Structure probing data (DMS and 2A3) for a 207-nucleotide construct. For DMS, 2,962 sequencing reads were counted.

[RMDB]
RNA sequence: GGGAACGACUCGAGUAGAGUCGAAAAACACCAAGACUGAAAACGGAAGGCAAUCCUUCCACGACGAUACUUACUUUCCUUUGAUCGUCGUUACUACUGGCAUAGCCACAAAGGAGAACAAACAUGAGCGCGGACACUGACUUCGGUCAGUGUCCAACGUACAACAAGUCUUCGGACUUGUUGUACGAAAAGAAACAACAACAACAAC
Reactivity to DMS in 0.01 (KOAc 150mM, MgCl2 10mM, bicine 150mM(pH8.5), 24C), signal-to-noise 2, nucleotides 027 to 156: a120c030a100c040c000a100a050g000a140c090u030g000a070a020a070a050c040g000g020a090a040g070g020c110a120a160u010c000c030u010u010c000c000a130c000g000a040c010g000a050u010a030c180u000u000a040c110u000u000u000c040c040u000u000u000g010a060u000c000g020u000c000g000u000u000a050c080u000a070c050u000g030g040c060a130u000a100g020c000c040a140c080a050a060a040g020g000a070g090a070a210c100a080a100a080c050a140u020g030a100g020c050g030c070g010g040a020c000a020c000u000g010a030c020u000u000c300g000g000u000c000a010g010u020g010u000c000c000a010a010
Reactivity to 2A3 in 0.01 (KOAc 150mM, MgCl2 10mM, bicine 150mM(pH8.5), 24C), signal-to-noise 7, nucleotides 027 to 156: a000c070a030c020c000a040a050g080a090c120u190g100a110a100a020a030c060g000g010a000a000g020g000c180a060a190u240c000c010u000u010c000c000a000c000g010a000c000g000a000u080a150c030u080u010a050c010u070u130u090c030c000u040u010u030g030a010u010c000g000u000c000g000u030u040a020c020u020a040c010u010g010g000c070a240u110a120g040c010c010a040c050a030a040a020g040g020a030g020a060a040c050a070a110a010c060a110u230g090a040g090c110g010c090g050g000a000c000a000c000u000g000a000c010u040u070c200g040g000u000c000a000g010u000g000u000c000c000a000a000
Source: RMDB library M2RFPK, as collected in RNAgym. For 2A3 the reverse transcriptase was SuperScript II with manganese.